[RMDB]
RNA sequence: GGGAACGACUCGAGUAGAGUCGAAAAGGAAAGCCUCCCCGGAUGGAGAAAGUCUAAACGGAUCCUGUGAGGCCGCCGUGAGGAUCGGGUAAGACGAACAGUCGAAUGCUGCCAGCCCAUUGGGUGAACGGUAUGUCCCAUUCGUGGGACAUACCGUAAAAGAAACAACAACAACAAC
Reactivity to 2A3 in 0.01 (KOAc 150mM, MgCl2 10mM, bicine 150mM(pH8.5), 24C), signal-to-noise 1, nucleotides 027 to 126: g030g020a040a000a020g010c020c090u030c000c000c000c080g050g010a000u040g000g000a020g090a040a150a000g150u000c010u080a070a100a020c000g040g000a040u040c030c020u110g120u220g200a100g000g060c000c000g070c010c000g050u060g070a010g020g000a040u080c120g010g070g000u020a070a020g060a010c030g070a030a120c070a050g100u070c050g040a020a000u050g000c000u000g000c000c000a000g000c000c010c000a020u050u080g000g000g000u070g000a040
Reactivity to DMS in 0.01 (KOAc 150mM, MgCl2 10mM, bicine 150mM(pH8.5), 24C), signal-to-noise 2, nucleotides 027 to 126: g000g040a230a190a160g010c000c000u010c060c000c000c030g000g060a180u000g000g000a050g060a130a060a160g040u010c010u000a000a180a270c000g000g010a130u000c070c000u000g020u010g000a050g000g040c030c030g000c030c000g040u010g000a100g010g000a050u000c010g010g000g020u040a030a090g000a020c120g000a110a040c120a200g020u010c080g070a010a090u010g000c150u000g000c060c000a090g000c110c000c020a140u030u000g030g010g020u010g000a030

The data come from the RNA Mapping Database (RMDB), library RFM100. This 177-nucleotide RNA was probed chemically with 2A3 and DMS. For DMS, 1,900 sequencing reads were counted.